[RMDB]
RNA sequence: GGGAACGACUCGAGUAGAGUCGAAAAUUCCAGUUGCGGAAAUUAAUGCAGGUUCAGUAGUAACGGUUGAACGAGUUAGUGGUAUUUCAGGUAAAACUAUGUACGGUGAUGAUAUUACUUCACAGAAAAUCAGGGAAGGGUUCGCCCUUCCCUGAUUAAAAGAAACAACAACAACAAC
Reactivity to DMS in 0.01 (KOAc 150mM, MgCl2 10mM, bicine 150mM(pH8.5), 24C), signal-to-noise 2, nucleotides 027 to 126: u010u010c010c020a100g040u010u010g000c080g000g000a040a090a050u000u010a020a110u010g040c080a050g010g000u020u010c030a030g010u000a040g020u000a030a060c120g020g030u000u010g010a060a100c080g000a120g000u000u000a050g040u010g020g020u000a070u000u000u000c030a060g020g010u000a020a020a120a120c090u020a040u000g010u000a070c110g020g000u010g020a020u010g040a090u000a130u010u010a070c040u000u000c070a040c060a110g000a070a050